This 207-nucleotide RNA was probed chemically with DMS and 2A3. Source: RMDB library RNAMAK, as collected in RNAgym. The RNA was probed in 150 mM KOAc, 10 mM MgCl2 and 150 mM bicine (pH 8.5) at 24 C.

[RMDB]
RNA sequence: GGGAACGACUCGAGUAGAGUCGAAAACACAGCUUCGGCUGUGCCAUACCGUAGGCAUGAGGUACGAAGAACGCACCUCCCCACCUAGGAUUCGAAAGAGUCCUAGAGGGUGCGGGAGUAUGGAGUGCCUAAACGGACUAGUCAGGUUCGCCUGAAACUUAAUAACGAUGUUCGCAUCGUUAUUAAGAAAAGAAACAACAACAACAAC
Reactivity to DMS in 0.01 (KOAc 150mM, MgCl2 10mM, bicine 150mM(pH8.5), 24C), signal-to-noise 4, nucleotides 027 to 156: c010a020c010a030g000c000u000u020c300g050g040c000u010g020u000g010c020c050a130u010a090c000c030g060u000a060g010g040c030a050u000g020a300g010g010u000a010c050g020a160a140g030a110a150c020g030c010a050c010c000u000c230c000c010c050a300c090c010u000a020g010g020a030u000u000c000g000a220a100a260g000a030g030u000c000c000u000a020g000a160g030g020g010u000g000c090g010g000g010a160g030u000a030u000g010g010a300g010u000g020c010c010u000a020a040a090c010g000g000a050c010u000a090g010u000c100a080g020g010u000u010c080g000c010c040u010g000a100a090a140
Reactivity to 2A3 in 0.01 (KOAc 150mM, MgCl2 10mM, bicine 150mM(pH8.5), 24C), signal-to-noise 7, nucleotides 027 to 156: c010a000c010a000g020c010u110u160c250g200g000c000u000g010u010g010c000c010a190u220a140c000c000g010u010a010g000g000c010a010u080g030a050g130g060u010a000c010g160a300a090g020a120a010c000g000c000a000c010c000u070c060c000c030c000a040c000c000u000a000g010g000a000u010u000c010g030a080a060a070g000a020g010u010c000c000u000a000g000a010g010g000g000u000g000c000g000g010g010a030g000u020a010u060g130g040a060g010u000g000c000c000u020a100a040a000c010g000g020a030c080u120a060g160u050c000a010g020g050u050u100c140g090c060c000u060g030a080a050a030